[RMDB]
Notes: An RNA of 207 nucleotides, treated with DMS and 2A3 and read out base by base. DMS adducts were read by reverse transcription with MarathonRT. For 2A3, 438 sequencing reads were counted. The data come from the RNA Mapping Database (RMDB), library OK3TST.

RNA sequence: GGGAACGACUCGAGUAGAGUCGAAAAAGGAGAAUGUGUUACCUCCAAAAGUCACAUAUGCCAGCACAGUGUCUGGCUCAUCAUAUGCCUUCAGUAGGCGGUGAGCAUGGCUGUUCUUGUUAUUACUACAUCACAAUUACUAGGAAUAAUGGAGUCAAAAGAAGGAAGGGUUCGCCCUUCCUUCUUUAAAAGAAACAACAACAACAAC
Reactivity to DMS in 0.01 (KOAc 150mM, MgCl2 10mM, bicine 150mM(pH8.5), 24C), signal-to-noise 2, nucleotides 027 to 156: a150g010g010a090g020a080a050u000g020u010g030u000u000a100c050c030u000c010c110a050a070a090a080g040u000c030a060c030a090u010a090u000g020c000c000a060g000c130a080c070a160g040u000g000u000c020u000g020g000c040u000c020a010u000c030a070u000a120u000g030c000c010u000u000c130a190g030u000a040g020g030c010g030g050u000g010a040g010c030a110u000g010g020c010u000g030u000u010c060u020u000g010u000u000a060u010u000a090c050u010a040c050a140u000c060a110c080a100a140u000u010a120c030u010a120g000g020a080a040u010a010a040u000g010g010a090g010u000c070a090
Reactivity to 2A3 in 0.01 (KOAc 150mM, MgCl2 10mM, bicine 150mM(pH8.5), 24C), signal-to-noise 1, nucleotides 027 to 156: a000g010g000a000g000a050a040u080g020u000g000u030u030a070c000c000u070c000c000a000a130a000a000g080u080c030a070c000a040u160a060u100g000c000c000a000g050c030a050c020a020g010u010g060u110c040u140g080g000c000u000c000a000u000c000a000u060a150u300g000c000c030u040u150c040a150g030u100a040g120g000c030g000g000u000g000a010g040c030a080u060g080g000c000u010g030u030u040c080u000u000g100u040u000a010u010u050a030c030u060a050c000a050u230c130a040c040a080a000u180u050a050c040u030a000g070g070a040a060u030a080a040u090g080g000a000g010u080c090a120